[RMDB]
RNA sequence: GGGAACGACUCGAGUAGAGUCGAAAAGGAAAUCGCGAAGCAUUUCCCGUCGCGUCUGGGUUACGUUACACCGCUUGCCGCUGGUGCGUUUCCGCUGACGCGUCGCCAUGCGUUGCAGUACGUGCAGUAAUUCAAAGUGUUUCGACACUUUGAAUUAAAAAGAAACAACAACAACAAC
Reactivity to DMS in 0.01 (KOAc 150mM, MgCl2 10mM, bicine 150mM(pH8.5), 24C), signal-to-noise 9, nucleotides 027 to 126: g010g000a010a020a020u000c070g020c110g010a140a160g010c150a040u000u000u000c010c000c010g010u000c010g010c010g010u000c010u000g010g000g000u000u000a010c010g020u010u010a230c040a030c020c010g000c020u000u010g020c260c160g010c030u010g050g010u000g010c020g000u000u000u000c010c010g000c050u000g000a010c010g010c000g000u000c010g000c010c020a110u010g010c060g010u000u000g000c050a060g010u010a070c110g020u000g010c050a090g010
Reactivity to 2A3 in 0.01 (KOAc 150mM, MgCl2 10mM, bicine 150mM(pH8.5), 24C), signal-to-noise 9, nucleotides 027 to 126: g020g010a020a020a010u090c090g000c140g200a130a030g010c050a020u020u000u000c000c000c000g000u010c010g000c010g010u000c010u030g020g010g000u000u010a000c010g010u050u100a050c050a030c030c020g030c070u080u250g170c100c090g010c150u230g010g000u010g000c000g000u010u010u000c030c080g110c160u030g000a000c000g000c000g000u000c000g000c000c010a070u140g030c040g100u090u090g000c030a050g060u190a110c090g080u050g030c030a050g060